[RMDB]
RNA sequence: GGGAACGACUCGAGUAGAGUCGAAAAGAAGUCCGGGGAAGCAAAACCGCGCCGUCCAGACGGGCCCGACGGCCGCGGGCGGGUCUAACAGUUGGAUGAUUUUAGUGGCGGGAUGCCACCGCGCCACGAAAACAUCAAGAUUCGUCUUGAUGUUUUCAAAAGAAACAACAACAACAAC
Reactivity to 2A3 in 0.01 (KOAc 150mM, MgCl2 10mM, bicine 150mM(pH8.5), 24C), signal-to-noise 7, nucleotides 027 to 126: g100a090a010g040u020c020c010g010g000g010g040a090a030g050c070a080a080a050a060c010c000g000c010g000c000c000g000u030c020c010a040g040a120c040g010g000g010c010c010c010g010a020c020g010g060c090c050g020c010g000g010g000c000g000g010g020u020c020u060a090a050c050a080g010u060u040g060g020a110u070g060a130u070u050u090u200a050g000u020g020g000c020g010g010g020a060u160g060c010c010a030c020c010g110c000g000c010c000a010c030
Reactivity to DMS in 0.01 (KOAc 150mM, MgCl2 10mM, bicine 150mM(pH8.5), 24C), signal-to-noise 7, nucleotides 027 to 126: g010a110a110g000u010c020c020g010g000g010g020a090a100g000c070a070a060a120a130c050c040g010c040g000c020c010g000u010c010c110a100g000a140c100g000g000g000c010c030c080g010a040c040g000g010c060c060g020c030g000g000g010c060g000g000g020u000c040u010a080a100c130a080g010u010u010g000g000a070u020g000a130u010u000u010u020a110g020u000g000g000c010g000g000g000a130u040g010c100c070a070c020c020g010c010g000c010c010a020c050
About this RNA
An RNA of 177 nucleotides, treated with 2A3 and DMS and read out base by base. DMS adducts were read by reverse transcription with MarathonRT. For 2A3, 11,386 sequencing reads were counted. The DMS profile rests on 19,518 reads.